[RMDB]
RNA sequence: GGGAACGACUCGAGUAGAGUCGAAAACUUUAAUAGAUCCAGUGCAAAGCCCAGGAGCUUAGUUUUGCAAACACCCCAAACAUGGCAGAUGGUCCAUGGGCCACACUCAAGAACUGCUGCUUAGUCCAGAGGAGGCCUGGUUUACUGCCAAGACAGCCUCAUACAUCGGGUUCGCCCGAUGUAUGAGAAAAGAAACAACAACAACAAC
Reactivity to 2A3 in 0.01 (KOAc 150mM, MgCl2 10mM, bicine 150mM(pH8.5), 24C), signal-to-noise 1, nucleotides 027 to 156: c020u250u230u210a120a070u160a120g000a030u040c000c000a010g060u010g050c010a060a100a050g000c040c060c120a160g050g000a070g030c010u020u000a000g030u040u030u000u050g070c030a020a230a080c050a110c040c020c000c010a060a160a020c050a110u120g000g020c000a030g030a280u100g080g040u020c000c010a060u070g020g010g000c000c000a000c000a000c010u060c010a200a100g030a230a080c040u080g030c000u030g000c040u230u070a010g000u040c040c110a080g020a100g070g000a070g000g000c000c000u020g000g000u000u000u050a010c010u040g010c070c000a000a000g040a000c000a000g170c000
Background: The record gives the reactivity of an RNA of 207 nucleotides to 2A3. Values are in units of 0.01, from 0 to 300, in steps of 10. For 2A3, 437 sequencing reads were counted. The reactions ran in a buffer of 150 mM KOAc, 10 mM MgCl2 and 150 mM bicine (pH 8.5), at 24 C. The data come from the RNA Mapping Database (RMDB), library OK3TST.